The record gives the reactivity of an RNA of 177 nucleotides to DMS and 2A3. For 2A3, 3,520 sequencing reads were counted. 2A3 adducts were read by reverse transcription with SuperScript II with manganese. It was measured as part of the RMDB library OK2TST. DMS adducts were read by reverse transcription with MarathonRT.
[RMDB]
RNA sequence: GGGAACGACUCGAGUAGAGUCGAAAACGAGAGCGAUUCGAAGACGGGUUUCGAGGUUUCUUUCUCCCACCGACCGUCGAACCCAGCCGGUACACUCAUGCCCGUUCGUGUGGGGUGUUAACGCAGCCAAAGACACGCUAUUCGUAGCGUGUCUUUGAAAAGAAACAACAACAACAAC
Reactivity to DMS in 0.01 (KOAc 150mM, MgCl2 10mM, bicine 150mM(pH8.5), 24C), signal-to-noise 6, nucleotides 027 to 126: c150g010a080g000a070g010c060g020a160u000u000c040g010a080a140g010a080c080g010g000g000u010u000u000c030g000a110g000g000u000u010u000c080u000u000u000c070u000c010c000c020a150c180c080g000a040c050c020g010u000c020g000a040a130c020c010c010a110g010c040c030g010g010u000a060c080a060c030u000c040a070u010g000c020c030c060g000u010u000c100g020u010g020u010g000g000g000g000u000g010u000u010a060a080c130g000c090a120g000c160
Reactivity to 2A3 in 0.01 (KOAc 150mM, MgCl2 10mM, bicine 150mM(pH8.5), 24C), signal-to-noise 2, nucleotides 027 to 126: c070g010a030g010a000g050c010g090a160u000u110c050g020a090a030g040a030c080g030g030g000u100u210u120c030g010a020g000g050u070u060u000c030u080u100u000c060u040c010c000c000a030c050c020g030a030c020c020g090u070c010g010a010a000c000c000c010a010g020c020c020g000g000u070a030c030a010c030u040c010a050u120g030c030c000c020g040u070u100c070g040u100g010u070g100g000g030g000u010g030u040u050a070a010c030g010c020a010g040c020